Structure probing data (2A3 and DMS) for a 177-nucleotide construct. For 2A3 the reverse transcriptase was SuperScript II with manganese. The RNA was probed in 150 mM KOAc, 10 mM MgCl2 and 150 mM bicine (pH 8.5) at 24 C. The data come from the RNA Mapping Database (RMDB), library TTRDEL.

[RMDB]
RNA sequence: GGGAACGACUCGAGUAGAGUCGAAAAGAUAUGGAGCCGAGACGAUAAGCUCCGGAUCGGAAACGAUCCGAAGAGCUUUUGACGUAUUAGGCUCCUAAGUCAAAACGGUGUACUUCGGUACACCGAACUAUCACCGUAUGUUCGCAUACGGUGAUAGAAAAGAAACAACAACAACAAC
Reactivity to 2A3 in 0.01 (KOAc 150mM, MgCl2 10mM, bicine 150mM(pH8.5), 24C), signal-to-noise 3, nucleotides 027 to 126: g010a000u050a030u140g000g000a000g010c010c010g030a030g020a020c020g030a080u040a140a040g000c000u000c000c000g000g000a010u010c000g010g000a060a060a030c010g000a010u000c020c010g030a140a040g000a000g010c000u050u050u050u150g170a050c000g000u020a040u170u100a160g000g000c000u000c000c000u000a000a000g000u000c020a000a000a070a140c020g000g000u000g010u010a010c000u040u110c300g100g000u010a000c000a000c000c000g000a010a010
Reactivity to DMS in 0.01 (KOAc 150mM, MgCl2 10mM, bicine 150mM(pH8.5), 24C), signal-to-noise 4, nucleotides 027 to 126: g010a040u000a300u000g000g010a010g010c000c010g000a230g010a020c000g020a120u010a020a020g010c000u000c010c010g010g010a010u000c010g010g000a120a100a150c000g010a010u000c000c000g010a100a090g010a010g000c000u000u000u010u010g010a160c080g010u010a020u000u010a180g000g000c000u000c000c000u000a010a070g000u000c050a060a110a110a140c020g010g010u000g020u000a000c010u000u000c180g030g000u000a020c000a010c000c000g010a020a060